[RMDB]
Chemical mapping of a 207-nucleotide RNA with 2A3.
RNA sequence: GGGAACGACUCGAGUAGAGUCGAAAACGAUGAUUCGUCAUCGCUGGCGGGGUCUCCGAUGAAAGCGUAUGGAGCGUCGUACUGAAGCCUCCACGGUACAACGCGUUGAAAUACGCUGGAGGAGACGGAGGCACCCAGAAGCCUACUUCGGUAGGAAUUCUACGUGUCUUUUCGAAGACACGUAGAAAAAAGAAACAACAACAACAAC
Reactivity to 2A3 in 0.01 (KOAc 150mM, MgCl2 10mM, bicine 150mM(pH8.5), 24C), signal-to-noise 2, nucleotides 027 to 156: c020g010a000u020g010a030u060u180c230g080u010c090a020u010c010g030c070u030g100g020c130g020g150g100g020u010c000u000c020c000g150a300u020g000a010a000a000g000c000g000u000a000u030g000g010a000g010c000g000u010c000g000u000a000c010u000g030a140a010g000c000c000u000c010c000a040c030g010g000u010a010c030a040a000c050g010c020g090u130u020g000a000a000a000u000a000c000g000c000u000g000g000a000g000g000a000g000a000c020g000g010a000g000g000c000a020c000c000c010a080g030a180a040g030c010c010u010a000c000u050u070c220g130g000u010a000g020g070a010a070

It was measured as part of the RMDB library RNAMAK.